[RMDB]
RNA sequence: GGGAACGACUCGAGUAGAGUCGAAAAUCGGAACGCAACCCUGCAGAUCUUUUGAUAACUAUGGUAAAUAACAUGUCUUCAACAGCAAACAUGCCGGAAGCGAAAGACAAAGGUAAUAUCGCGAUUAAACCACGAAUAUUUGCAAUCACCACUAAUAAGGUGAACAGAGAUUCGUCUCUGUUCACCUAAAAGAAACAACAACAACAAC
Reactivity to 2A3 in 0.01 (KOAc 150mM, MgCl2 10mM, bicine 150mM(pH8.5), 24C), signal-to-noise 3, nucleotides 027 to 156: u040c000g010g010a050a150c020g020c020a000a070c030c010c020u030g000c040a020g040a090u040c010u020u070u160u110g080a070u080a050a050c050u070a110u130g010g020u080a080a080a100u200a130a060c030a030u030g010u020c030u030u020c010a050a030c010a040g000c000a010a050a130c010a030u050g040c040c000g030g030a050a000g030c020g040a070a000a020g050a030c030a050a120a000g020g010u030a110a040u050a050u120c020g010c020g050a010u090u080a100a050a020c020c000a040c060g090a120a030u130a100u090u060u120g010c020a030a060u070c020a020c090c000a030c140u060a070a110u220a110
Reactivity to DMS in 0.01 (KOAc 150mM, MgCl2 10mM, bicine 150mM(pH8.5), 24C), signal-to-noise 1, nucleotides 027 to 156: u010c080g000g030a050a110c040g000c060a110a050c070c010c000u010g030c100a060g010a090u000c020u000u040u030u010g000a090u000a050a140c040u000a120u010g040g060u000a060a130a090u040a070a070c040a110u000g010u000c040u000u000c060a040a040c100a070g020c070a090a030a190c030a030u010g020c050c020g000g000a020a150g000c100g000a120a090a040g000a040c050a030a030a040g040g000u000a030a060u000a070u000c010g020c040g010a090u000u000a060a090a170c000c070a010c000g040a100a070u030a050u000u000u010g030c020a100a180u000c060a070c000c000a040c000u000a090a080u000a060